[RMDB]
RNA sequence: GGGAACGACUCGAGUAGAGUCGAAAAGGAUGACGGCUGCGAUGCUGGGGUUGGCCCAAACCGCUGACAAGCGUCAGCCGACGAUUGGUAGAACAAACUCGAAAUAUUCCAAGUGCUUGUUUUUUAUACAGUCCUAGCAAUUCGUUGCUAGGACUGUAAAAGAAACAACAACAACAAC
Reactivity to 2A3 in 0.01 (KOAc 150mM, MgCl2 10mM, bicine 150mM(pH8.5), 24C), signal-to-noise 1, nucleotides 027 to 126: g010g010a030u110g000a000c000g000g000c000u040g030c130g070a030u100g030c020u040g010g000g050g000u080u250g070g000c110c000c000a100a060a000c080c080g090c080u060g040a140c020a160a000g030c000g040u110c000a000g000c000c000g020a000c040g050a050u090u170g000g030u100a000g040a040a000c040a070a180a000c000u010c000g000a000a030a150u140a060u090u090c020c040a010a010g110u040g060c200u000u000g000u000u000u000u000u000u000a080u000